[RMDB]
RNA sequence: GGGAACGACUCGAGUAGAGUCGAAAAUGGACUUUAUACAGUUCCUACUUAUCCGGUUUUAACGCUGUUUUAUUGGCGCAAAGGUUUACGGAUAAACAACUAAUAAUUAAACCUUUUGUGUGCGAAAAUUGGACGUUUAGGUUCGCCUAAACGUCAAGGAUUGCUGUUAGUUCGCUAACAGCAAUCCAAAAGAAACAACAACAACAAC
Reactivity to 2A3 in 0.01 (KOAc 150mM, MgCl2 10mM, bicine 150mM(pH8.5), 24C), signal-to-noise 1, nucleotides 027 to 156: u150g030g070a030c040u040u090u190a200u100a100c100a070g000u110u030c030c000u080a120c010u090u010a010u030c020c020g000g060u040u080u000u080a060a040c010g000c020u000g190u070u260u050u240a110u180u140g010g000c000g040c010a010a000a010g000g050u000u000u000a000c000g020g000a000u030a060a040a010c040a000a040c000u230a050a130u130a140a040u140u200a030a000a010c000c000u070u090u120u050g140u010g020u040g070c060g110a050a080a050a090u260u090g140g000a010c000g010u000u010u000a040g000g020u040u040c190g040c050c000u000a000a000a000c000g000u000c000a000a000
This 207-nucleotide RNA was probed chemically with 2A3. It was measured as part of the RMDB library M2RFPK. Reactivities are rounded to 0.1 and cut off at 0 and 3. The reactions ran in a buffer of 150 mM KOAc, 10 mM MgCl2 and 150 mM bicine (pH 8.5), at 24 C. 2A3 is a SHAPE reagent: it acylates the 2'-hydroxyl of flexible nucleotides of all four kinds.